[RMDB]
RNA sequence: GGGAACGACUCGAGUAGAGUCGAAAAUUGUUAAAACAGACCCUUAUAACACACUAUGGUCUUGCAUCAUAUCAGAGAAUACUAAUACAACUUAUCCUGAAUUGGUCCUAAAUUUUCACAAAUUAAAAUAUGUCCAAGAUUGUCCCAAGGGCUCACCCAGUCGUAACCAGUUCGCUGGUUACGACUGAAAAGAAACAACAACAACAAC
Reactivity to 2A3 in 0.01 (KOAc 150mM, MgCl2 10mM, bicine 150mM(pH8.5), 24C), signal-to-noise 1, nucleotides 027 to 156: u090u040g070u030u090a070a080a000a000c020a000g010a040c000c000c000u000u030a080u090a140a020c040a000c000a000c050u020a010u010g040g010u050c020u090u240g050c040a030u010c000a000u040a030u120c050a020g020a010g030a120a000u050a180c000u050a080a090u110a200c020a140a070c030u050u010a060u250c020c000u000g010a100a010u090u000g070g040u000c000c030u010a050a050a050u040u040u060u100c010a030c000a220a020a000u040u040a040a050a020a000u010a070u050g020u000c000c000a000a040g020a160u060u090g050u000c060c000c030a070a040g080g020g000c020u000c010a020c010c050